The record gives the reactivity of an RNA of 170 nucleotides to 2A3 and DMS.
Reactivities are given for positions 27 through 129.
High 2A3 reactivity points to a flexible backbone, as in loops and unpaired stretches.
DMS adducts were read by reverse transcription with MarathonRT.
2A3 adducts were read by reverse transcription with SuperScript II with manganese.
The DMS profile rests on 93,585 reads.

[RMDB]
RNA sequence: GGGAACGACUCGAGUAGAGUCGAAAAAUUCCUUUGAUGUUUCCCAGCCAGGGAUUGUCUUCCUCUAGUUUCUUGAUCUUCUUCUUGGCCUUCCGGAGAUCCUUCUCGAGAUCAUCCACUAACUUUCAAACGAUACUGUUCGCAGUAUCGAAAAGAAACAACAACAACAAC
Reactivity to 2A3 in 0.01 (KOAc 150mM, MgCl2 10mM, bicine 150mM(pH8.5), 24C), signal-to-noise 9, nucleotides 027 to 129: a000u060u040c020c000u060u030u110g080a070u050g040u000u030u020c000c000c010a010g050c050c030a020g020g020g030a040u040u110g050u020c010u080u030c020c000u030c030u030a060g050u030u070u020c000u020u060g070a110u030c010u070u000c000u060u010c010u030u050g040g000c010c000u040u030c030c020g020g000a040g010a030u030c020c000u030u040c030u020c020g060a080g030a190u020c010a070u020c010c010a070c090u080a140a070c040u050u100u080c070a090a070a030
Reactivity to DMS in 0.01 (KOAc 150mM, MgCl2 10mM, bicine 150mM(pH8.5), 24C), signal-to-noise 9, nucleotides 027 to 129: a120u040u020c000c020u020u040u040g030a020u020g000u010u010u010c010c000c040a080g030c060c050a090g040g030g000a050u020u040g000u020c060u030u020c020c020u040c080u010a050g030u010u020u010c020u020u010g030a120u020c040u000u010c030u040u000c030u000u040g000g020c100c020u030u020c020c020g000g000a130g000a070u010c060c010u000u000c000u000c020g030a060g020a050u000c010a120u030c020c040a090c150u030a100a080c130u010u020u020c030a060a080a200